The record gives the reactivity of an RNA of 207 nucleotides to 2A3 and DMS. DMS adducts were read by reverse transcription with MarathonRT. Source: RMDB library VIROID, as collected in RNAgym. 2A3 adducts were read by reverse transcription with SuperScript II with manganese.

[RMDB]
RNA sequence: GGGAACGACUCGAGUAGAGUCGAAAACUCAGACAGGGUGUAAUCCCAGCUGAAACAGGGUUUUCACCCUUCCUUUCUUCGGGUUUCCUUUCCUCAGCUGGCGGCCUCGCCCGGAGUCUUCUUCUCCAGCGCAGGUUCUGACGCGACCGGUGGCAUCGCUAUUCUAAUUGUUCGCAAUUAGAAUAGCAAAAGAAACAACAACAACAAC
Reactivity to 2A3 in 0.01 (KOAc 150mM, MgCl2 10mM, bicine 150mM(pH8.5), 24C), signal-to-noise 3, nucleotides 027 to 156: c020u020c000a020g040a120c100a040g010g020g000u020g020u080a040a060u060c010c000c010a030g020c080u150g090a050a080a050c080a100g030g010g000u040u050u100u100c050a040c010c000c000u030u070c020c010u060u090u120c010u080u110c050g020g010g000u010u030u080c020c000u030u080u070c020c010u040c010a010g010c020u050g030g030c030g050g010c030c000u010c020g000c000c030c030g020g010a010g000u010c030u150u010c020u110u020c010u080c020c010a020g000c020g010c090a000g030g000u080u080c050u100g040a050c040g020c020g080a070c010c010g050g040u020g060g000c030a060u130c100
Reactivity to DMS in 0.01 (KOAc 150mM, MgCl2 10mM, bicine 150mM(pH8.5), 24C), signal-to-noise 1, nucleotides 027 to 156: c050u000c030a120g020a160c090a080g020g070g090u000g020u040a070a070u000c020c000c000a140g050c010u010g020a130a170a150c100a110g020g080g000u000u020u000u000c050a080c000c000c020u010u000c040c040u000u000u000c020u000u000c070g000g000g010u010u000u010c030c020u000u000u010c010c040u000c030a120g020c000u000g030g020c040g000g010c030c020u000c020g000c000c020c030g030g000a090g030u000c100u000u010c050u000u010c030u000c010c020a110g020c100g080c060a070g000g000u010u000c060u000g030a180c050g020c070g030a060c040c000g000g020u000g020g010c040a110u000c110